Structure probing data (DMS) for a 177-nucleotide construct.
Conditions: 150 mM KOAc, 10 mM MgCl2 and 150 mM bicine (pH 8.5), 24 C.
RNA sequence: GGGAACGACUCGAGUAGAGUCGAAAAGAUAUGGAGGCUGUCGUGAACUACCAUUAGUUGUCGGAAACGACAACUUUAUGGCACGAGCAGCCUCCUAAGUCAAAAGUGAACCGUUCGCGGUUCACAAGUCGGAAAGUGAGUUCGCUCACUUUCCGACAAAAGAAACAACAACAACAAC
Reactivity to DMS in 0.01 (KOAc 150mM, MgCl2 10mM, bicine 150mM(pH8.5), 24C), signal-to-noise 1, nucleotides 027 to 126: g000a050u000a300u000g010g030a030g010g040c000u040g020u000c000g000u000g040a100a010c200u010a300c010c000a000u020u000a020g000u000u020g020u020c000g000g020a020a050a300c000g000a000c000a000a000c000u000u010u000a010u000g020g010c000a030c000g010a080g000c000a030g020c000c000u010c000c000u000a000a070g000u000c040a020a120a210a110g000u000g000a020a000c010c000g000u000u000c210g020c030g030g000u000u010c000a000c000a030a040